[RMDB]
RNA sequence: GGGAACGACUCGAGUAGAGUCGAAAAACUGAUACCUUACGAGGUAUCAGAAUGACUUCGUGGUAGAGCGCCACGAACGGAAAAUAAAGAAAGCUCGAUUGAAACGCUCCGUGUACGCACGGUGCGAAAAAGUCGAUCCAGUUCGCUGGAUCGACAAGUAUGAGAGCAGGUUCGCCUGCUCUCAUACAAAAGAAACAACAACAACAAC
Reactivity to 2A3 in 0.01 (KOAc 150mM, MgCl2 10mM, bicine 150mM(pH8.5), 24C), signal-to-noise 1, nucleotides 027 to 156: a010c000u000g000a000u000a000c000c010u050u030a020c260g060a020g040g000u000a000u020c000a010g000a010a090u140g020a000c000u000u000c010g000u020g000g010u040a190g060a010g000c010g000c010c000a000c000g000a010a000c040g100g060a010a000a060a040u070a000a030a040g160a020a020a000g000c030u000c020g170a240u040u300g090a150a140a000c010g000c000u010c000c050g000u000g000u010a010c200g030c020a000c020g000g000u000g000c000g000a030a080a000a000a000g010u010c000g000a000u000c000c000a000g040u000u060c140g110c160u000g000g020a000u000c000g000a000c000a000a000
Source: RMDB library M2RFPK, as collected in RNAgym. Structure probing data (2A3) for a 207-nucleotide construct. The RNA was probed in 150 mM KOAc, 10 mM MgCl2 and 150 mM bicine (pH 8.5) at 24 C. Reactivities are given for positions 27 through 156. For 2A3, 653 sequencing reads were counted.